Structure probing data (2A3 and DMS) for a 177-nucleotide construct.
2A3 adducts were read by reverse transcription with SuperScript II with manganese.
Source: RMDB library OK2TRN, as collected in RNAgym.
For DMS the reverse transcriptase was MarathonRT.
The DMS profile rests on 808 reads.
RNA sequence: GGGAACGACUCGAGUAGAGUCGAAAAGGUACCUAGUCAUCACACAUGACUAGCAUGCAUGCGUACGCGACAUGCUGAUCGAUCUGUACGCACAUGGAUCCAUGCAUGCACAUCUACAUGACACUAGGGGCAGUGCAGUAUUCGUACUGCACUGCCCAAAAGAAACAACAACAACAAC
Reactivity to 2A3 in 0.01 (KOAc 150mM, MgCl2 10mM, bicine 150mM(pH8.5), 24C), signal-to-noise 2, nucleotides 027 to 126: g200g020u120a040c020c000u000a010g000u040c000a010u000c040a070c040a010c000a190u020g040a020c000u010a020g000c010a000u030g000c000a020u000g010c000g060u000a000c050g000c030g050a020c030a090u280g080c170u150g040a300u000c020g030a050u000c030u190g060u040a000c030g070c010a030c000a100u080g070g000a020u030c010c000a010u030g010c000a000u000g050c080a000c000a120u000c020u120a090c040a080u110g130a050c020a030c080u010a010g070
Reactivity to DMS in 0.01 (KOAc 150mM, MgCl2 10mM, bicine 150mM(pH8.5), 24C), signal-to-noise 2, nucleotides 027 to 126: g000g010u040a030c080c000u000a030g020u010c040a040u000c130a090c220a160c300a110u020g010a020c040u000a120g030c030a010u000g000c040a100u000g000c000g000u000a020c040g000c010g000a010c030a080u010g040c140u010g030a100u000c050g010a070u000c110u050g010u000a000c020g000c070a070c140a150u010g010g010a040u000c130c070a140u010g000c010a000u000g000c060a130c180a150u000c050u010a070c170a040u000g010a100c200a100c130u000a030g010